Chemical mapping of a 207-nucleotide RNA with 2A3.
Values cover nucleotides 27 to 156.
For 2A3, 572 sequencing reads were counted.
High 2A3 reactivity points to a flexible backbone, as in loops and unpaired stretches.
The data come from the RNA Mapping Database (RMDB), library OK3TST.
RNA sequence: GGGAACGACUCGAGUAGAGUCGAAAAAGGAAGGAGAAAAGUUAUCUCUCGCCGUGGGGAAGGGACAAAUUCUCCCCGUCGGGGAGGAGGGACACUUUUGCCCCGUGGGUCGGGAGGAAGUUAUCUCCCCGGGAAGGAGAAGUUUUCUACGCGUCGGCAAGUUUGGAAUGUUCGCAUUCCAAACUUGAAAAGAAACAACAACAACAAC
Reactivity to 2A3 in 0.01 (KOAc 150mM, MgCl2 10mM, bicine 150mM(pH8.5), 24C), signal-to-noise 1, nucleotides 027 to 156: a010g070g040a020a020g020g010a010g040a000a090a020a000g060u080u070a210u140c010u000c000u000c010g020c010c010g030u040g000g000g000g030a040a040g070g000g000a100c030a000a030a010u020u000c030u010c000c000c000c020g230u220c240g000g000g010g000a010g030g010a000g000g010g020a030c010a060c080u070u070u050u230g120c000c000c000c010g000u060g050g010g080u100c000g000g000g000a030g020g000a030a000g010u000u070a030u080c010u040c020c000c010c010g040g000g000a010a020g040g000a010g000a030a050g050u010u000u010u180c010u070a030c030g050c050g150u080c030g040g020